[RMDB]
RNA sequence: GGGAACGACUCGAGUAGAGUCGAAAAAACGUUUCGCACUCGCUGCUUAAUAACCAGUGAGCCCUACAACAGCAGGCCGAUGGGCUGGGCAAGGGGUCUUUAGCGCAAGUUGAAGGCUCCCGGCUGUAGGGUCAUACACAUCGGCUGGCCUGGUACCGAUGCAAACAUUGUUCGCAAUGUUUGCAUCAAAAGAAACAACAACAACAAC
Reactivity to 2A3 in 0.01 (KOAc 150mM, MgCl2 10mM, bicine 150mM(pH8.5), 24C), signal-to-noise 1, nucleotides 027 to 156: a010a000c060g000u030u020u000c030g000c020a010c010u000c010g000c000u010g010c000u070u000a040a010u060a080a020c000c000a000g000u010g020a000g000c010c020c010u070a070c060a220a000c000a030g010c000a000g000g120c000c010g030a030u040g040g060g040c030u100g000g060g000c000a030a050g030g000g000g010u000c000u000u000u010a030g000c040g010c140a150a050g000u000u000g020a000a000g000g010c020u070c000c000c030g060g000c010u000g060u060a080g090g000g000u030c010a010u070a190c120a000c020a020u000c020g000g000c000u000g030g030c000c010u010g020g060u040a040c040c110

Background
Structure probing data (2A3) for a 207-nucleotide construct. Conditions: 150 mM KOAc, 10 mM MgCl2 and 150 mM bicine (pH 8.5), 24 C. Source: RMDB library ARCHII, as collected in RNAgym. 2A3 adducts were read by reverse transcription with SuperScript II with manganese.